[RMDB]
RNA sequence: GGGAACGACUCGAGUAGAGUCGAAAAACUGUUUUUGAUACGACUUCCUUCAAUUCGGAGGAUAUAGCUGUUUGUAUUGAGGGUCGCAUUUUCAAGGCUAGCAUUUAUGAUGGUGGUUUGUCCGCGACUGACCAGCAGCAUUCGUGCUGCUGGUCAGAAAAGAAACAACAACAACAAC
Reactivity to 2A3 in 0.01 (KOAc 150mM, MgCl2 10mM, bicine 150mM(pH8.5), 24C), signal-to-noise 1, nucleotides 027 to 126: a000c070u100g060u140u020u000u000u050g150a160u000a170c090g100a080c040u000u000c020c000u070u000c010a300a300u200u110c050g000g000a000g040g000a000u070a000u090a040g000c040u000g040u080u130u050g000u070a030u030u110g100a110g030g000g020u150c000g080c030a000u080u000u100u130c110a000a000g100g000c000u040a050g050c000a000u020u020u050a130u300g060a000u020g000g220u020g020g060u040u030u080g130u180c100c030g000c000g000a040
Reactivity to DMS in 0.01 (KOAc 150mM, MgCl2 10mM, bicine 150mM(pH8.5), 24C), signal-to-noise 1, nucleotides 027 to 126: a090c120u000g010u000u030u030u010u060g010a080u000a080c080g020a080c090u010u010c000c000u000u050c030a240a100u030u010c140g000g000a000g000g000a100u000a020u000a170g020c070u000g030u000u010u000g000u000a020u000u030g000a130g000g000g000u000c010g000c030a060u050u010u110u070c070a120a030g000g040c050u000a040g000c100a020u000u010u070a040u000g060a020u000g010g000u000g020g010u000u010u000g020u000c200c100g030c100g020a020